[RMDB]
RNA sequence: GGGAACGACUCGAGUAGAGUCGAAAAUGCCUAAUUCAAGGAAUUAGCGUGCCUUCAUGCUAAGGGUUUGAUAUCUGCUAAAACCCGGUGCAUUCAUCAAUGCAGGUUAAGCCUAAGGGAUGUCCCGAAAAGAACGCAAGGUUCGCCUUGCGUUCAAGUUUCGCUUAUUCUUCGGAAUAAGCGAAACAAAAGAAACAACAACAACAAC
Reactivity to 2A3 in 0.01 (KOAc 150mM, MgCl2 10mM, bicine 150mM(pH8.5), 24C), signal-to-noise 3, nucleotides 027 to 156: u130g020c020c010u030a040a080u060u070c140a170a100g110g040a050a110u020u000a020g030c070g080u050g040c020c010u060u120c040a050u070g010c010u050a020a060g030g020g000u020u030u010g070a100u060a090u150c090u070g020c050u090a000a010a040a090c000c030c000g020g000u030g000c010a050u040u200c040a040u040c050a050a090u140g000c000a000g030g020u010u060a060a010g010c000c020u060a060a040g010g000g020a030u070g060u080c000c000c000g010a050a080a010a030g000a000a000c000g000c000a000a000g010g000u050u070c190g030c070c000u000u000g010c000g000u000u000c000a000a000
Reactivity to DMS in 0.01 (KOAc 150mM, MgCl2 10mM, bicine 150mM(pH8.5), 24C), signal-to-noise 1, nucleotides 027 to 156: u000g000c010c000u010a020a070u010u010c070a110a210g000g010a060a060u010u000a060g020c020g060u000g030c010c030u010u000c090a080u010g070c030u020a300a300g000g000g010u000u000u000g010a160u010a100u020c060u000g030c070u000a110a020a040a070c020c010c000g030g140u000g020c010a070u000u000c030a080u000c060a060a080u010g030c040a030g010g010u000u000a050a030g010c010c000u010a090a280g010g020g000a070u010g000u000c000c010c010g000a120a030a080a150g010a020a020c000g020c010a140a000g050g000u000u000c300g000c000c000u000u010g010c010g000u000u000c010a010a100